[RMDB]
RNA sequence: GGGAACGACUCGAGUAGAGUCGAAAAGAACGAUAGCGUAAUCGACGAAGUUUGGUAGGAGGGUUGAAAGGGGGGUGUUGGACCAUUGCAGGUGUAAGACUAGCACAGAGUUCAGCCUAGAUUCACUCCGGUUAAGCUGUAGUGGUUACACACCUAGUGAUAGGUACAUCUUCGGAUGUACCUAUCAAAAAGAAACAACAACAACAAC
Reactivity to 2A3 in 0.01 (KOAc 150mM, MgCl2 10mM, bicine 150mM(pH8.5), 24C), signal-to-noise 3, nucleotides 027 to 156: g040a040a000c050g050a080u110a000g050c020g010u030a090a090u100c070g060a030c040g000a130a000g060u030u080u140g060g020u080a100g000g060a060g030g060g010u130u170g110a060a140a070g030g030g000g000g060g000u010g000u010u160g020g000a010c000c020a030u020u060g000c020a010g000g030u010g060u060a070a000g030a060c010u020a040g060c110a020c010a090g080a050g010u180u180c030a000g010c000c010u020a030g020a050u090u090c050a010c060u050c040c000g020g000u090u090a040a040g020c030u040g000u040a010g000u040g010g010u010u130a040c020a000c000a000c000c010u010a050g010
Reactivity to DMS in 0.01 (KOAc 150mM, MgCl2 10mM, bicine 150mM(pH8.5), 24C), signal-to-noise 2, nucleotides 027 to 156: g030a110a100c040g020a060u010a060g010c040g030u000a070a060u000c050g030a160c080g000a080a070g010u000u010u010g010g010u010a060g000g040a090g000g030g000u000u010g000a040a090a110g020g010g010g010g080g050u010g040u010u000g030g020a060c050c020a100u000u000g010c060a100g030g040u000g020u010a120a140g020a090c040u000a060g040c050a120c060a140g000a100g000u010u000c050a060g010c010c020u000a080g020a170u010u010c070a130c050u000c010c050g010g020u000u010a050a080g000c020u010g020u010a040g030u010g000g000u000u000a150c120a070c020a070c020c010u010a080g000

Chemical mapping of a 207-nucleotide RNA with 2A3 and DMS.
For DMS, 4,926 sequencing reads were counted.
For DMS the reverse transcriptase was MarathonRT.
It was measured as part of the RMDB library OK3TST.
The RNA was probed in 150 mM KOAc, 10 mM MgCl2 and 150 mM bicine (pH 8.5) at 24 C.